[RMDB]
RNA sequence: GGGAACGACUCGAGUAGAGUCGAAAAAGACCACCAGCUAAGGUCCCAAAAUAUAUGUUAAGUGGAAAAGGAUGUGGGGUUGCACAGACAACUAGGAUGUUAGCUUAGAAGCAGCUAUUCAUUCAAAUCAAGUGCCUAAUUUCGAUUAGGCACUUGAAAAAGAAACAACAACAACAAC
Reactivity to DMS in 0.01 (KOAc 150mM, MgCl2 10mM, bicine 150mM(pH8.5), 24C), signal-to-noise 2, nucleotides 027 to 126: a090g000a120c050c050a100c030c060a120g010c050u010a060a120g010g000u000c010c010c030a060a060a100a080u000a060u010a090u000g010u010u010a040a070g040u010g030g000a060a070a120a080g000g000a050u000g030u000g000g000g000g010u000u010g020c070a100c050a090g000a060c090a030a050c120u000a100g000g000a020u000g010u000u000a030g020c010u000u000a130g010a120a110g010c300a010g000c020u000a020u010u000c030a040u000u000c040a080a020a130